[RMDB]
RNA sequence: GGGAACGACUCGAGUAGAGUCGAAAACGGCUUAGUGCGAUGUAAUGCGCUUUGUACGAAAGAUUUCUCUGCGACAUUAAUUUGGGGCAGAUGGGCAGUUGUGAUUCAAUGUCAAUUGAAUAGCUCAUCUCUUACCGCGGUUCGCCGCGGUAAGAGAAAAAGAAACAACAACAACAAC
Reactivity to 2A3 in 0.01 (KOAc 150mM, MgCl2 10mM, bicine 150mM(pH8.5), 24C), signal-to-noise 1, nucleotides 027 to 126: c050g000g020c000u000u000a000g000u000g000c000g000a190u150g230u300a150a040u300g000c060g000c050u000u000u000g000u060a080c000g070a040a000a100g040a080u000u280u000c000u010c060u040g080c060g030a000c030a000u030u030a170a040u090u060u130g000g000g030g000c000a000g070a110u010g000g000g000c070a070g010u030u000g120u100g040a080u010u030c030a000a000u120g300u300c010a030a030u030u000g000a010a000u000a070g000c000u000c000a100